[RMDB]
Structure probing data (2A3 and DMS) for a 177-nucleotide construct. Conditions: 150 mM KOAc, 10 mM MgCl2 and 150 mM bicine (pH 8.5), 24 C. It was measured as part of the RMDB library OK2TRN. The DMS profile rests on 741 reads. 2A3 is a SHAPE reagent: it acylates the 2'-hydroxyl of flexible nucleotides of all four kinds.
RNA sequence: GGGAACGACUCGAGUAGAGUCGAAAAGAUUUAGCUCCAAGGGAGGGAGGGAAUAUAUACAAGGUGCGAUUUAAGGGGCAAGUAUGUAUAGGGAAGUGAAGAAGCUCCGAAAACUUCACAUUUGAAAGAUUUACUAGUACUUCGGUACUAGUAAAUCAAAAGAAACAACAACAACAAC
Reactivity to 2A3 in 0.01 (KOAc 150mM, MgCl2 10mM, bicine 150mM(pH8.5), 24C), signal-to-noise 2, nucleotides 027 to 126: g050a000u080u150u130a060g060c020u010c040c020a040a060g050g070g060a260g010g030g020a160g030g020g000a090a020u040a000u000a000u010a140c040a050a090g130g000u060g120c070g020a060u070u090u120a030a030g030g000g000g020c050a010a000g040u130a080u090g090u020a020u040a030g030g020g020a060a130g020u000g000a020a000g020a060a020g050c030u060c080c040g050a010a040a030a010c010u000u030c020a010c000a120u060u180u110g100a100a090a040
Reactivity to DMS in 0.01 (KOAc 150mM, MgCl2 10mM, bicine 150mM(pH8.5), 24C), signal-to-noise 1, nucleotides 027 to 126: g000a140u020u000u000a140g020c020u000c000c050a080a230g040g050g000a070g010g030g020a060g020g000g000a170a080u010a010u000a140u000a080c060a070a140g000g020u000g000c000g000a110u040u010u000a060a050g020g000g060g000c000a020a160g020u000a060u000g010u010a070u010a120g030g010g000a110a130g010u000g000a060a000g000a130a120g000c120u000c080c050g010a020a070a080a020c000u000u000c010a020c040a120u000u030u000g000a070a060a070